[RMDB]
RNA sequence: GGGAACGACUCGAGUAGAGUCGAAAACCAUUCCUUAUACCUUGAGUAUUGCUGAAUUCAGUUUAGCGUGCAUGCUCUUGCCUAUUCUCAUAGUGAUUGUCAAAUUUGGAGUUACUUAUUCGUCAAUAAAACACUACCACGUUCGCGUGGUAGUGAACCAUACCAGAAGGUUCGCCUUCUGGUAUGGAAAAGAAACAACAACAACAAC
Reactivity to DMS in 0.01 (KOAc 150mM, MgCl2 10mM, bicine 150mM(pH8.5), 24C), signal-to-noise 2, nucleotides 027 to 156: c020c050a210u000u000c020c050u000u000a180u000a020c050c050u000u000g010a130g000u010a030u010u000g050c020u000g010a070a050u000u010c100a160g010u000u000u010a050g010c050g040u010g030c090a120u000g000c020u010c020u010u000g040c050c010u000a140u000u000c030u000c040a120u000a100g020u000g010a010u010u010g010u020c040a050a090a120u000u010u000g000g010a190g010u010u000a090c050u000u010a100u010u000c040g000u000c050a050a050u010a030a050a050a150c010a000c000u000a000c000c000a000c000g000u010u010c230g040c010g070u010g010g030u010a000g000u000g000a020a060
Reactivity to 2A3 in 0.01 (KOAc 150mM, MgCl2 10mM, bicine 150mM(pH8.5), 24C), signal-to-noise 8, nucleotides 027 to 156: c010c000a030u040u080c010c010u080u080a080u040a190c010c010u050u050g010a020g020u050a070u120u130g010c020u030g050a130a100u190u150c080a110g110u040u080u110a050g030c040g040u040g020c040a010u040g010c000u000c000u030u030g000c000c020u060a100u160u130c070u030c090a070u060a050g080u090g140a150u060u080g070u100c060a050a090a120u070u050u070g030g010a040g050u080u060a070c050u130u120a110u190u130c060g070u060c070a110a130u090a190a070a020a010c010a010c000u000a000c000c000a000c010g000u030u050c150g030c000g090u000g000g000u000a000g000u000g000a000a000